[RMDB]
RNA sequence: GGGAACGACUCGAGUAGAGUCGAAAAUGCAACUCGAGAGCAUGAAGCCGGAAUCGCUAGUAAUCGCAAAUCAGCCAUGUUGCGGUGAAUACGUUCCCGGGUCUUGUACUCACCGCCCGUCACACCAACAUCUUGAGUUAUUCGUAACUCAAGAUGUAAAAGAAACAACAACAACAAC
Reactivity to 2A3 in 0.01 (KOAc 150mM, MgCl2 10mM, bicine 150mM(pH8.5), 24C), signal-to-noise 9, nucleotides 027 to 126: u130g000c020a040a050c020u030c070g060a040g010a010g030c020a030u070g080a060a020g110c010c000g000g040a050a040u110c050g000c040u020a010g010u060a030a030u030c010g000c020a030a030a080u090c060a110g130c080c020a110u240g030u060u020g020c000g000g020u020g020a030a020u100a060c020g010u020u040c020c010c010g000g000g000u020c020u030u080g040u060a070c010u010c030a040c010c040g030c020c010c000g060u070c020a040c010a020c060c020a030
Reactivity to DMS in 0.01 (KOAc 150mM, MgCl2 10mM, bicine 150mM(pH8.5), 24C), signal-to-noise 9, nucleotides 027 to 126: u020g020c080a090a070c070u010c050g010a070g020a270g000c040a040u000g010a080a110g030c020c020g000g010a060a040u010c060g020c040u000a060g010u010a080a040u000c040g010c020a020a030a060u020c100a140g010c130c150a060u010g000u010u010g010c010g000g000u000g000a100a090u000a070c020g010u010u010c020c000c000g000g000g010u010c040u020u010g010u010a070c040u010c030a080c060c060g010c010c020c020g010u010c070a090c110a100c100c080a100